[RMDB]
Conditions: 150 mM KOAc, 10 mM MgCl2 and 150 mM bicine (pH 8.5), 24 C. The record gives the reactivity of an RNA of 207 nucleotides to 2A3. Source: RMDB library VIROID, as collected in RNAgym. 2A3 is a SHAPE reagent: it acylates the 2'-hydroxyl of flexible nucleotides of all four kinds.

RNA sequence: GGGAACGACUCGAGUAGAGUCGAAAAACGUCCAGCUCCUUCGGGACCACGCUGCUCUGGGCGGAAGAUUCUUCUGACACUUCUAGCCUAUUCAGCUUCGCGUCCUUGAGGCCUGGCGUAACGCGGCUCUUGCCACCAGGAUGCCUCCGCUAGUCGACACUACGUGGCAGUUCGCUGCCACGUAGUGAAAAGAAACAACAACAACAAC
Reactivity to 2A3 in 0.01 (KOAc 150mM, MgCl2 10mM, bicine 150mM(pH8.5), 24C), signal-to-noise 2, nucleotides 027 to 156: a000c010g080u110c040c000a030g000c030u050c020c000u020u040c050g000g020g000a000c000c030a070c080g000c000u000g010c000u000c010u000g000g000g040c000g030g000a010a010g020a040u220u130c050u220u140c120u300g030a100c060a010c080u000u000c000u030a180g000c000c000u020a020u050u120c000a000g020c000u000u080c110g000c070g000u020c000c000u010u080g000a000g010g000c000c000u010g000g030c010g010u000a000a000c080g010c030g070g000c020u000c000u070u120g050c100c010a080c030c000a010g090g000a080u120g020c020c040u080c010c030g020c020u020a010g060u030c010g000a020